Background: The data come from the RNA Mapping Database (RMDB), library PDB130. This 207-nucleotide RNA was probed chemically with 2A3 and DMS. 2A3 adducts were read by reverse transcription with SuperScript II with manganese. Values cover nucleotides 27 to 156. The RNA was probed in 150 mM KOAc, 10 mM MgCl2 and 150 mM bicine (pH 8.5) at 24 C.
RNA sequence: GGGAACGACUCGAGUAGAGUCGAAAAAGAGGUGUCAGAAUAAUUACCACAGGGAUAACUGGCUUAUCCUUCGAUGUCGGCUCUUCCUAACCUAGCGGCUAAGGGUUGGAUUGUUCACCCACUGACAGGGAACGUGAGCUGGGUUUAGACCGUCGUGCAAGGAAUCGUAGUUCGCUACGAUUCCUUGAAAAGAAACAACAACAACAAC
Reactivity to 2A3 in 0.01 (KOAc 150mM, MgCl2 10mM, bicine 150mM(pH8.5), 24C), signal-to-noise 3, nucleotides 027 to 156: a010g050a010g020g010u010g010u000c000a010g080a100a190u130a200a080u220u130a130c050c000a110c150a170g080g010g020a080u070a100a030c010u070g070g010c000u080u100a070u170c010c000u040u070c050g120a080u130g060u030c010g020g020c020u010c030u030u000c010c000u000a000a030c000c000u010a020g020c040g120g030c040u060a100a140g060g030g000u010u020g040g060a100u030u040g040u070u030c030a080c030c010c000a030c040u080g040a050c050a070g140g010g000a090a050c050g050u050g020a020g000c000u010g010g010g010u020u050u020a070g000a080c010c060g000u020c020g010u010g010
Reactivity to DMS in 0.01 (KOAc 150mM, MgCl2 10mM, bicine 150mM(pH8.5), 24C), signal-to-noise 1, nucleotides 027 to 156: a090g000a020g000g040u000g030u000c050a110g000a130a070u000a090a210u000u000a060c040c030a140c110a110g030g010g010a100u000a040a070c040u000g010g000c060u010u000a040u000c000c010u000u000c000g000a160u000g000u000c020g000g030c040u000c040u000u000c040c020u020a030a060c020c010u010a030g000c070g010g010c100u010a040a090g020g040g010u000u000g020g000a170u000u000g040u000u010c040a040c030c020c000a230c050u010g000a120c030a120g040g000g050a060a080c080g000u000g030a060g000c000u000g010g020g000u000u000u000a060g000a070c030c040g050u000c060g000u000g010